[RMDB]
RNA sequence: GGGAACGACUCGAGUAGAGUCGAAAACAAACGACGACAACUACGCUCUAGCGGCUUAAUAACCCGCUAAGCCCAUCCCCCGGCGCUUUGUCUGCGAGACCGGACCAGGAUGGCUCAAACUAAUGUAGACUCGCGUGGAGGCUUUGUCCGGAGCUGACUCUAGUGUAUCCUUCGGGAUACACUAGAGAAAAGAAACAACAACAACAAC
Reactivity to 2A3 in 0.01 (KOAc 150mM, MgCl2 10mM, bicine 150mM(pH8.5), 24C), signal-to-noise 3, nucleotides 027 to 156: c030a000a120a000c030g160a020c030g020a010c020a120a090c160u130a030c050g020c010u050c050u050a010g000c000g010g000c000u030u030a030a000u040a040a030c020c000c000g000c000u010a010a010g010c030c020c030a010u010c000c000c010c000c060g000g010c120g030c140u050u130u180g060u130c070u040g010c010g010a050g010a050c000c000g010g010a020c040c020a000g010g000a000u000g000g000c000u040c040a090a140a040c060u180a110a090u240g020u040a010g020a030c030u010c060g040c000g020u060g010g050a070g000g000c010u090u070u110g040u060c040c030g070g040a020g000c010u030g060a050
Reactivity to DMS in 0.01 (KOAc 150mM, MgCl2 10mM, bicine 150mM(pH8.5), 24C), signal-to-noise 1, nucleotides 027 to 156: c010a140a100a110c010g060a140c000g000a070c050a070a110c070u010a080c050g030c080u010c110u030a030g030c030g010g000c030u000u000a170a170u020a240a130c300c000c000g000c010u000a030a070g010c060c020c030a070u000c010c050c070c060c020g010g030c030g040c040u000u000u020g040u000c110u000g010c090g010a090g010a080c050c030g000g020a030c000c180a090g020g030a030u000g000g030c010u010c070a090a050a100c100u000a040a080u000g020u000a040g010a070c070u000c060g030c030g000u000g030g000a070g010g000c060u000u000u020g000u000c000c010g010g010a140g010c010u020g020a200